The record gives the reactivity of an RNA of 177 nucleotides to DMS and 2A3.
RNA sequence: GGGAACGACUCGAGUAGAGUCGAAAAAAUUAGGGUGUGAGAGUAUCUCUCUCCCAGCCGUUUCGCGCAGCCAUUUUUUUUGAUUUUAUUUGGGUUAGCUGCGCGAAUUGGCUGGCGUUCCCGCAAAACUAAUGUAAUACUUCGGUAUUACAUUAGUAAAAGAAACAACAACAACAAC
Reactivity to DMS in 0.01 (KOAc 150mM, MgCl2 10mM, bicine 150mM(pH8.5), 24C), signal-to-noise 4, nucleotides 027 to 126: a070a070u010u010a090g010g010g020u000g010u000g000a020g010a050g010u010a100u010c080u000c010u000c020u000c030c000c000a010g010c000c010g000u000u000u000c010g010c000g020c000a010g010c010c060a000u010u000u000u000u010u010u010u010g010a110u010u010u010u000a070u010u020u000g010g010g010u010u000a090g000c010u000g010c010g010c010g010a010a010u000u010g010g010c010u000g000g010c030g010u000u000c000c000c000g020c230a060a060a070
Reactivity to 2A3 in 0.01 (KOAc 150mM, MgCl2 10mM, bicine 150mM(pH8.5), 24C), signal-to-noise 5, nucleotides 027 to 126: a010a010u240u130a070g040g000g010u050g000u010g010a010g000a010g020u250a280u110c110u000c010u000c010u000c030c000c010a000g000c010c000g010u000u000u020c000g000c000g000c010a010g050c010c030a030u050u020u050u010u040u040u110u300g100a120u080u120u080u230a130u080u110u100g120g020g020u050u140a040g050c010u000g000c000g000c000g000a000a000u000u020g000g000c000u000g000g010c010g000u000u000c010c010c010g000c030a100a130a020
For 2A3 the reverse transcriptase was SuperScript II with manganese. For 2A3, 7,420 sequencing reads were counted. The reactions ran in a buffer of 150 mM KOAc, 10 mM MgCl2 and 150 mM bicine (pH 8.5), at 24 C. It was measured as part of the RMDB library M2PK90. For DMS, 9,537 sequencing reads were counted.